[RMDB]
RNA sequence: GGGAACGACUCGAGUAGAGUCGAAAAGAUGCGUCGUGGAAGUCCCGUGACGCAACAUCCACGGUCCGCGGAGGUACCUCGGCCGGCGGGGAGUUGCGUUGGGAGAUUCAGCGGGCUUUGCCGUGGGCCCGCUUGCUACGUUCGCGUAGUAAGCGGGAAAAGAAACAACAACAACAAC
Reactivity to DMS in 0.01 (KOAc 150mM, MgCl2 10mM, bicine 150mM(pH8.5), 24C), signal-to-noise 2, nucleotides 027 to 126: g000a030u010g010c010g000u010c000g010u000g020g020a070a090g000u000c010c000c000g020u020g010a030c000g000c000a000a000c000a120u010c000c010a070c020g000g020u080c020c000g030c150g000g010a290g000g010u070a150c020c000u000c000g010g030c020c010g000g000c090g020g000g000g010a070g020u000u000g010c010g030u010u010g010g000g000a050g010a170u020u020c300a030g030c000g010g000g010c100u060u000u060g070c000c040g000u110g010g000g000
Reactivity to 2A3 in 0.01 (KOAc 150mM, MgCl2 10mM, bicine 150mM(pH8.5), 24C), signal-to-noise 4, nucleotides 027 to 126: g050a010u060g020c010g050u030c010g010u060g010g020a050a010g070u060c000c000c010g020u060g010a000c000g000c000a000a000c000a040u010c000c000a010c010g000g030u070c020c000g000c010g020g000a050g030g080u140a110c010c000u000c010g030g010c000c010g020g010c160g030g020g000g010a210g020u020u020g040c020g000u010u040g010g020g010a090g020a080u080u050c020a020g000c010g000g000g000c000u080u040u100g030c000c000g010u100g000g060g000